[RMDB]
RNA sequence: GGGAACGACUCGAGUAGAGUCGAAAAAGGUGUAGAAAAAGCGCAAAUAAAUAGAUUGAAGUUGUUCAAACAACACGGCAUAUCUUCAAAAUGUGUAUAUGUUAAAUGGAAUCCUUAUUCAUACACACCUCAUACAUCGGUUCGCCGAUGUAUGAGGAAAAGAAACAACAACAACAAC
Reactivity to DMS in 0.01 (KOAc 150mM, MgCl2 10mM, bicine 150mM(pH8.5), 24C), signal-to-noise 1, nucleotides 027 to 126: a120g030g000u040g020u070a120g000a190a050a110a290a000g000c090g000c160a020a010a130u000a090a130a050u010a030g000a090u000u020g000a090a080g000u000u000g000u000u000c300a160a060a010c190a000a000c100a020c160g000g000c040a060u040a070u000c070u000u000c050a060a050a130a040u000g000u000g000u000a000u000a090u050g020u060u020a090a120a050u080g000g000a000a020u000c060c040u000u000a050u010u000c130a000u020a040c000a060c130a090
Reactivity to 2A3 in 0.01 (KOAc 150mM, MgCl2 10mM, bicine 150mM(pH8.5), 24C), signal-to-noise 2, nucleotides 027 to 126: a060g140g000u070g020u090a060g120a020a110a030a020a050g030c070g020c080a040a090a020u260a070a140a010u100a070g100a110u000u130g030a100a030g030u000u000g050u000u250c080a070a120a080c050a000a050c000a010c070g000g030c030a080u040a050u070c050u150u110c080a100a070a010a210u210g050u000g000u000a000u020a000u020g140u070u060a060a110a030u130g080g000a030a000u000c030c030u000u070a040u020u080c020a040u000a030c040a000c010a060